Structure probing data (2A3 and DMS) for a 177-nucleotide construct.
For DMS, 1,000 sequencing reads were counted.
The data come from the RNA Mapping Database (RMDB), library OK2TRN.
The 2A3 profile rests on 1,307 reads.
Conditions: 150 mM KOAc, 10 mM MgCl2 and 150 mM bicine (pH 8.5), 24 C.
[RMDB]
RNA sequence: GGGAACGACUCGAGUAGAGUCGAAAACUGUGAUCUGCUAUCACAACUGAGAUAUAAACCUAUCAACAAGAAAGGACUCUCAAAACAUUAUAGCCCAGGCACUUAUGCAAUCCAAAUGAGUGGUCAGUACGAUGUAGAGGUUCGCCUCUACAUCGUAAAAAGAAACAACAACAACAAC
Reactivity to 2A3 in 0.01 (KOAc 150mM, MgCl2 10mM, bicine 150mM(pH8.5), 24C), signal-to-noise 2, nucleotides 027 to 126: c040u020g010u000g030a060u020c100u200g010c060u130a010u070c000a010c020a010a080c120u000g040a010g000a020u140a000u060a260a110a020c000c000u060a060u170c030a010a200c020a120a030g080a130a040a010g080g040a070c010u000c000u000c000a070a090a040a010c040a070u120u180a030u210a130g040c000c060c000a000g000g050c010a000c010u030u060a030u130g000c030a020a170u010c030c050a080a090a190u120g040a040g080u040g000g080u020c010a050g050
Reactivity to DMS in 0.01 (KOAc 150mM, MgCl2 10mM, bicine 150mM(pH8.5), 24C), signal-to-noise 2, nucleotides 027 to 126: c090u000g000u000g000a040u000c120u000g030c030u010a110u010c020a030c040a070a150c160u000g010a060g000a040u010a160u010a030a100a090c060c030u010a020u010c040a130a130c140a080a100g000a050a100a100g000g010a170c140u020c010u000c020a010a040a040a040c100a080u000u010a030u010a080g020c010c040c040a150g010g000c050a030c140u000u000a010u020g010c070a050a100u000c170c080a040a050a050u020g020a020g000u000g010g000u000c020a080g000